An RNA of 177 nucleotides, treated with DMS and 2A3 and read out base by base.
RNA sequence: GGGAACGACUCGAGUAGAGUCGAAAAGAUGACGUGACGAGGAGUCACGUCAUCAAGAAUAGGAAGUACGAGAACCUAGAGAAACGUACAAUCGCGAGAGCGAGUGCCAGGAGACUGGUACAAAAGAGUACCUGCAGGAUUUCGAUCCUGCAGGUACAAAAGAAACAACAACAACAAC
Reactivity to DMS in 0.01 (KOAc 150mM, MgCl2 10mM, bicine 150mM(pH8.5), 24C), signal-to-noise 1, nucleotides 027 to 126: g060a020u000g010a010c000g000u000g010a000c000g000a100g070g000a300g000u000c000a000c030g000u000c000a020u060c000a120a030g000a030a200u030a000g000g000a020a000g010u000a010c000g020a200g020a160a000c000c040u010a130g040a300g070a000a000a300c000g030u000a030c010a130a150u000c000g000c000g000a210g000a210g010c000g020a040g000u000g000c030c000a000g000g000a020g000a150c000u000g010g000u000a000c000a010a050a170a050g010a210
Reactivity to 2A3 in 0.01 (KOAc 150mM, MgCl2 10mM, bicine 150mM(pH8.5), 24C), signal-to-noise 2, nucleotides 027 to 126: g000a000u020g010a000c000g000u000g000a000c020g000a030g240g070a040g000u000c000a000c000g000u000c000a000u000c000a010a000g020a000a070u130a000g000g000a160a020g010u020a000c020g000a000g140a200a000c010c000u070a080g040a020g080a300a000a000c000g000u000a000c000a010a040u020c000g030c020g000a020g020a000g040c000g000a030g000u010g010c010c000a010g000g020a070g020a080c000u000g000g000u000a000c000a000a050a000a020g180a020
Conditions: 150 mM KOAc, 10 mM MgCl2 and 150 mM bicine (pH 8.5), 24 C. The 2A3 profile rests on 2,017 reads.